[RMDB]
RNA sequence: GGGAACGACUCGAGUAGAGUCGAAAACUUAAUACCGUCCUUGCACAGUCAUUGGCCAAUACUAUUGUUGAAAUUAUAACUAGAGACAACAAAGACCAUUUAACUGAGUUUAAGGUUCUAGCUAAUGUGACCCCAUGUUAUUCGUAACAUGGGGUCAAAAAGAAACAACAACAACAAC
Reactivity to DMS in 0.01 (KOAc 150mM, MgCl2 10mM, bicine 150mM(pH8.5), 24C), signal-to-noise 1, nucleotides 027 to 126: c000u000u000a080a090u000a130c050c090g040u000c020c040u030u000g050c020a110c040a050g040u000c070a110u000u010g010g000c050c000a110a030u000a030c170u010a160u000u020g020u010u000g000a080a070a090u000u000a040u020a100a140c110u000a080g020a130g000a160c020a000a020c070a060a110a080g020a000c010c050a070u000u000u000a020a060c050u040g000a180g010u010u000u010a060a110g010g000u000u000c010u000a120g000c110u000a080a110u000g000